[RMDB]
RNA sequence: GGGAACGACUCGAGUAGAGUCGAAAAGAUAUGGAAUGUUAGACUGUUCGUCCAGUAGCAUCGAUCUACUGGGUCGGAAACGACCCGUAGGGAGCUACAGGACGAACAGUCUAACAUUCCUAAGUCAUCAAGCUUACUUGUUCGCAAGUAAGCUUGAAAAAGAAACAACAACAACAAC
Reactivity to DMS in 0.01 (KOAc 150mM, MgCl2 10mM, bicine 150mM(pH8.5), 24C), signal-to-noise 2, nucleotides 027 to 126: g000a050u000a300u010g000g000a000a010u000g010u000u000a000g010a050c000u010g020u010u000c000g030u000c010c000a100g030u000a020g050c000a300u000c250g010a040u010c010u000a000c020u020g090g000g010u010c000g010g010a090a130a250c020g000a010c000c000c000g000u000a000g010g000g010a010g020c010u000a000c000a130g010g000a000c000g000a000a000c010a000g000u000c000u010a000a000c000a000u000u000c000c000u010a010a090g020u000c040a150
Chemical mapping of a 177-nucleotide RNA with DMS. Values cover nucleotides 27 to 126. It was measured as part of the RMDB library TTRINS.